[RMDB]
RNA sequence: GGGAACGACUCGAGUAGAGUCGAAAACCAACGCGUUCGCGCGUUGGAAAAAGCGUACUACGUCUUUUGACGAUGGCAUUCGGGAGUCCCAAAUAGGACUUUGAUCGAAUGGCCAUCGAUAAGACGUAUCGCAAAAACGAUGUCUUCGGACAUCGAAAGCCCCAAUAAACUUCGGUUUAUUGGGGCUAAAAGAAACAACAACAACAAC
Reactivity to 2A3 in 0.01 (KOAc 150mM, MgCl2 10mM, bicine 150mM(pH8.5), 24C), signal-to-noise 1, nucleotides 027 to 156: c000c000a000a000c000g050c010g010u020u070c300g000c000g000c010g110u010u020g010g090a180a050a000a020a000g020c010g020u040a040c090u010a000c010g020u000c000u170u020u050u140g190a180c020g010a000u000g000g030c000a000u000u000c010g020g020g020a000g010u020c000c000c020a080a300a060u240a090g000g010a010c000u120u080u140g100a060u250c000g010a000a000u040g060g240c000c000a040u000c000g000a000u010a010a000g030a000c020g000u010a000u100c030g000c050a000a170a000a000a000c010g000a000u000g000u000c000u030u020c200g120g000a000c010a010u000c000g000a040a000
Chemical mapping of a 207-nucleotide RNA with 2A3. 2A3 adducts were read by reverse transcription with SuperScript II with manganese. Values cover nucleotides 27 to 156. The reactions ran in a buffer of 150 mM KOAc, 10 mM MgCl2 and 150 mM bicine (pH 8.5), at 24 C.